[RMDB]
RNA sequence: GGGAACGACUCGAGUAGAGUCGAAAAGUUCGCCGUCGGGCGAAUGGAAGCGAAAAGUCGACCCCAAGCUGAAAAGCGAAGGGUCGAGUUGUUGAAAAAUGACCUGAGAGCAUGAGGCGAGACCCGUAGUGUCCUAAUGAUUCGUCAUUAGGACACUAAAAGAAACAACAACAACAAC
Reactivity to 2A3 in 0.01 (KOAc 150mM, MgCl2 10mM, bicine 150mM(pH8.5), 24C), signal-to-noise 1, nucleotides 027 to 126: g010u010u000c050g000c050c000g100u240c160g050g020g000c030g030a000a000u070g000g010a150a010g070c130g160a140a070a000a000g130u010c000g000a000c000c000c000c000a010a010g030c000u060g070a060a080a040a000g000c000g050a080a000g000g000g000u000c000g000a000g000u000u000g000u000u010g130a070a060a000a060a040u090g000a060c000c020u150g050a120g000a010g080c050a030u060g010a020g000g060c000g000a010g020a050c010c010c020g000u020
Reactivity to DMS in 0.01 (KOAc 150mM, MgCl2 10mM, bicine 150mM(pH8.5), 24C), signal-to-noise 3, nucleotides 027 to 126: g010u000u020c000g030c010c010g030u080c240g010g010g030c000g010a010a020u000g000g000a160a100g000c150g000a030a070a100a050g030u010c000g000a010c000c000c000c000a030a300g010c010u000g000a050a070a140a000g010c000g000a280a160g000g000g000u000c000g000a010g010u020u020g000u000u000g000a000a080a030a050a170u020g000a090c030c000u000g000a080g000a110g000c090a060u010g000a050g000g000c010g010a050g010a060c000c010c010g000u010

Record summary:
Source: RMDB libraries RFM100 and RFMREP, as collected in RNAgym. An RNA of 177 nucleotides, treated with 2A3 and DMS and read out base by base. 2A3 adducts were read by reverse transcription with SuperScript II with manganese. The reactions ran in a buffer of 150 mM KOAc, 10 mM MgCl2 and 150 mM bicine (pH 8.5), at 24 C.